[RMDB]
RNA sequence: GGGAACGACUCGAGUAGAGUCGAAAAGGUAUGGAACACAUAAGCAGAUUGGAAUGAAAGGGUAGCAAGCCCACAUACCUCAAACCAUCUGACAAGUUACUCGUAACACUGUCUCCCAGGAUAUUGGCGUCAACACUCAGACGGGAGACGAUAUCGCGGACUACUUGUCGUUCGCGACAAGUAGUCCAAAAGAAACAACAACAACAAC
Reactivity to 2A3 in 0.01 (KOAc 150mM, MgCl2 10mM, bicine 150mM(pH8.5), 24C), signal-to-noise 1, nucleotides 027 to 156: g000g010u030a000u080g030g060a030a040c130a000c050a130u100a290a000g080c040a000g100a150u070u190g030g020a010a020u000g030a100a020a090g010g000g020u090a080g080c190a230a000g000c000c000c000a000c010a020u060a030c000c010u000c030a020a040a000c000c000a010u030c050u030g060a070c030a120a070g060u060u020a080c030u020c000g010u040a030a000c040a020c070u170g000u030c030u000c080c000c010a030g100g040a000u100a080u300u300g030g000c000g020u300c010a050a050c110a060c130u070c000a000g050a110c050g000g000g060a040g000a000c000g000a030u030a000u150c060g000c020
Record summary:
The record gives the reactivity of an RNA of 207 nucleotides to 2A3.